Structure probing data (DMS and 2A3) for a 177-nucleotide construct. The reactions ran in a buffer of 150 mM KOAc, 10 mM MgCl2 and 150 mM bicine (pH 8.5), at 24 C. 2A3 adducts were read by reverse transcription with SuperScript II with manganese. Reactivities are given for positions 27 through 126. The 2A3 profile rests on 3,525 reads.

[RMDB]
RNA sequence: GGGAACGACUCGAGUAGAGUCGAAAAACAAUCUGGUUCGCCAGAUUGUCAAUGUCUUCCUAAAAUCCUUGGAAGACUGUAAAUAUAGAAUAAAGGUCGAAAGUACCUGUGCUUUCGAGCACAGGAAUCUCUACAUUCAGUUCGCUGAAUGUAGAGAAAAAGAAACAACAACAACAAC
Reactivity to DMS in 0.01 (KOAc 150mM, MgCl2 10mM, bicine 150mM(pH8.5), 24C), signal-to-noise 2, nucleotides 027 to 126: a020c000a000a000u000c000u000g000g000u000u010c290g030c010c000a020g000a010u000u000g020u000c080a120a090u010g000u000c000u000u010c000c000u010a010a010a010a150u000c000c000u010u010g010g000a030a000g000a010c000u000g000u000a040a060a080u000a200u010a080g010a120a150u030a080a120a010g000g010u000c200g000a110a050a050g010u010a130c000c000u000g020u000g000c010u000u000u000c150g010a010g020c000a000c000a010g020g000a060a030
Reactivity to 2A3 in 0.01 (KOAc 150mM, MgCl2 10mM, bicine 150mM(pH8.5), 24C), signal-to-noise 3, nucleotides 027 to 126: a000c000a010a010u000c000u000g000g000u010u030c110g060c070c000a010g000a010u000u030g000u010c010a010a040u080g000u000c000u000u010c000c000u000a000a010a020a100u000c010c000u010u000g000g000a000a000g010a000c000u010g020u030a040a090a070u260a060u090a150g090a150a070u240a280a240a030g000g000u000c020g020a120a110a000g030u070a090c000c010u010g000u010g030c010u050u050u170c290g080a010g020c000a000c000a000g000g010a000a010